Overview:
An RNA of 177 nucleotides, treated with DMS and read out base by base. The RNA was probed in 150 mM KOAc, 10 mM MgCl2 and 150 mM bicine (pH 8.5) at 24 C. It was measured as part of the RMDB library OK2TST. High DMS reactivity at an A or C suggests that its Watson-Crick edge is free.
[RMDB]
RNA sequence: GGGAACGACUCGAGUAGAGUCGAAAAUCACAACUCUUUCCUUUGUGGUGCUUAGUGUUUAAUUAUAAAAGCUUUAUAGUAGAGAUUUCAGAUGCGGUAGAACUUAUGGAAGGAAUGCUUGAAGCUACUCACAUGUGAGUUUCGACUCACAUGUGAGAAAAGAAACAACAACAACAAC
Reactivity to DMS in 0.01 (KOAc 150mM, MgCl2 10mM, bicine 150mM(pH8.5), 24C), signal-to-noise 1, nucleotides 027 to 126: u000c040a100c100a050a100c120u000c030u000u030u000c010c050u000u000u040g030u010g000g040u010g000c090u020u010a110g010u000g010u000u000u010a060a080u000u000a190u010a020a100a150a160g010c040u000u000u000a050u000a080g010u000a070g010a170g000a130u000u000u010c040a040g010a110u000g010c040g020g000u000a090g020a040a100c040u000u000a100u000g000g000a040a070g000g010a080a050u000g000c020u000u000g000a040a060g000c030u000a110